[RMDB]
RNA sequence: GGGAACGACUCGAGUAGAGUCGAAAAGAAAGAAAGCUGUGUUGAGUGUAUCCUCUCUAUUGAGUACAACUGUGGAUAGAUCACAUCUCGCAUUGCACUCAAUAGUGGGGCUCCUUUCAGCACCUAAGUAUGGAUUACUAUUCGUAGUAAUCCAUACAAAAGAAACAACAACAACAAC
Reactivity to DMS in 0.01 (KOAc 150mM, MgCl2 10mM, bicine 150mM(pH8.5), 24C), signal-to-noise 9, nucleotides 027 to 126: g000a080a060a080g010a090a090a110g010c120u010g010u010g010u000u000g000a040g010u010g010u000a060u000c010c000u000c010u000c020u000a020u000u010g000a010g010u000a030c000a010a010c200u010g040u000g000g000a030u000a070g000a120u030c300a110c120a300u000c010u030c020g020c010a040u000u000g000c050a010c000u000c000a000a010u000a000g010u010g000g000g000g000c040u000c120c010u000u000u000c010a020g010c030a060c010c110u000a070a130
Reactivity to 2A3 in 0.01 (KOAc 150mM, MgCl2 10mM, bicine 150mM(pH8.5), 24C), signal-to-noise 9, nucleotides 027 to 126: g080a010a070a010g140a050a120a010g070c180u090g020u010g010u050u020g010a040g010u060g010u050a050u030c000c000u000c000u000c000u000a010u000u010g000a000g000u000a010c010a020a020c150u020g010u020g050g020a040u050a110g200a130u200c060a050c020a150u010c100u090c020g000c000a000u000u010g000c010a000c000u000c000a000a000u000a000g000u030g000g000g000g000c010u010c000c000u070u250u020c000a000g000c000a020c000c010u050a130a020